Background:
The data come from the RNA Mapping Database (RMDB), library OK1LIB. The record gives the reactivity of an RNA of 177 nucleotides to 2A3 and DMS. For 2A3, 1,100 sequencing reads were counted. For 2A3 the reverse transcriptase was SuperScript II with manganese. For DMS, 1,904 sequencing reads were counted.
[RMDB]
RNA sequence: GGGAACGACUCGAGUAGAGUCGAAAACGAUUAGAUAUGUCCGAAUAUAUGGAAAAACAUACGAUUGCAAAAUUAAUUGGUUCACCUCCUGGAUAUAUAGGACAUAAUGAAGGUGGUCAAUUAACAGUCCCCUCCUUUGAUUCGUCAAAGGAGGGGAAAAAGAAACAACAACAACAAC
Reactivity to 2A3 in 0.01 (KOAc 150mM, MgCl2 10mM, bicine 150mM(pH8.5), 24C), signal-to-noise 2, nucleotides 027 to 126: c020g000a020u140u250a230g100a070u000a000u120g000u000c000c010g080a170a000u150a020u010a080u140g060g070a210a230a090a000a000c020a000u140a000c010g180a190u210u300g120c100a000a180a040a000u010u000a020a000u000u000g010g030u180u300c070a020c000c000u010c000c010u030g030g010a000u050a000u060a000u010a160g000g080a060c010a040u090a020a030u300g060a010a050g040g000u000g080g000u000c000a010a040u040u060a000a000c000a000g070
Reactivity to DMS in 0.01 (KOAc 150mM, MgCl2 10mM, bicine 150mM(pH8.5), 24C), signal-to-noise 2, nucleotides 027 to 126: c130g010a040u000u010a180g030a090u000a040u000g020u000c010c020g020a130a140u020a080u080a010u020g000g030a040a080a110a150a050c040a020u010a080c040g000a080u000u000g000c110a020a060a080a120u020u020a050a060u000u000g010g020u000u020c010a040c030c010u010c000c020u010g010g010a080u010a180u010a090u010a040g010g000a210c080a020u000a050a070u050g020a070a020g000g000u000g000g010u000c030a000a000u000u000a000a020c210a050g010